[RMDB]
RNA sequence: GGGAACGACUCGAGUAGAGUCGAAAAGCAUCUGCAGGACAGAUCAGCGUUCAGCCCACUUUCUCGGUACAGAGAAACCUUCCCUUCGAAAGAGCGACCAUUAUGGCAGCAUUUACAGGAAAUACUGAGGGCAGAACGUCUGACAUGAGGACUGAAAUAUAUGUCUUCCGUUCGCGGAAGACAUAUAAAAAGAAACAACAACAACAAC
Reactivity to DMS in 0.01 (KOAc 150mM, MgCl2 10mM, bicine 150mM(pH8.5), 24C), signal-to-noise 2, nucleotides 027 to 156: g000c030a170u000c040u000g040c010a100g070g030a300c030a070g010a080u010c100a130g020c000g000u000u000c030a270g050c040c040c010a220c200u000u030u000c000u000c000g000g010u000a100c180a180g010a030g020a010a030a060c270c140u010u000c000c060c040u000u000c040g040a080a180a040g000a140g020c030g000a100c030c030a300u000u000a090u030g040g030c070a030g150c020a130u000u000u000a100c120a020g030g010a010a150a120u070a300c040u020g010a090g070g020g090c000a180g020a000a000c020g000u020c020u000g000a070c090a080u000g020a090g010g000a100c000u000g000a080a200a290
Reactivity to 2A3 in 0.01 (KOAc 150mM, MgCl2 10mM, bicine 150mM(pH8.5), 24C), signal-to-noise 2, nucleotides 027 to 156: g070c030a070u060c020u260g020c030a050g050g000a020c010a020g110a270u010c010a010g010c000g000u000u010c010a010g000c010c010c010a050c050u070u050u000c020u000c000g070g050u230a110c100a070g030a000g000a010a000a000c000c030u050u000c010c010c000u080u080c050g030a060a010a020g050a030g000c020g080a070c000c030a090u140u150a110u300g060g000c070a030g000c010a030u020u060u100a050c020a010g070g050a020a050a030u160a080c110u190g050a160g020g010g000c000a000g010a000a000c000g050u030c020u000g020a010c000a050u140g050a040g020g060a030c020u040g040a000a120a010
This 207-nucleotide RNA was probed chemically with DMS and 2A3.
The 2A3 profile rests on 1,319 reads.
DMS adducts were read by reverse transcription with MarathonRT.